This 177-nucleotide RNA was probed chemically with DMS. It was measured as part of the RMDB library VIROID. For DMS, 1,939 sequencing reads were counted. The RNA was probed in 150 mM KOAc, 10 mM MgCl2 and 150 mM bicine (pH 8.5) at 24 C.
[RMDB]
RNA sequence: GGGAACGACUCGAGUAGAGUCGAAAAUGGGUUCGCCUACAAGAACGUACGGUGUUGAGGCCCUGUCCGCUGCUGCGCUGCCACCUACUCUUGGCGCCGCUAGUCGAGCGGACUCCGGGUGGAGCCCCCGUAUACGCAUGUUCGCAUGCGUAUACGGAAAAGAAACAACAACAACAAC
Reactivity to DMS in 0.01 (KOAc 150mM, MgCl2 10mM, bicine 150mM(pH8.5), 24C), signal-to-noise 3, nucleotides 027 to 126: u000g030g000g020u000u000c020g000c020c010u010a030c090a130a110g010a130a060c190g020u010a040c180g030g010u000g000u010u000g020a190g000g010c010c000c020u010g000u000c000c010g000c000u000g010c030u000g000c000g020c030u000g010c010c010a040c230c070u000a090c160u000c120u000u000g010g010c050g030c300c020g000c010u000a030g010u000c090g010a030g030c020g010g000a000c000u020c110c230g000g010g020u000g000g010a060g030c010c000c010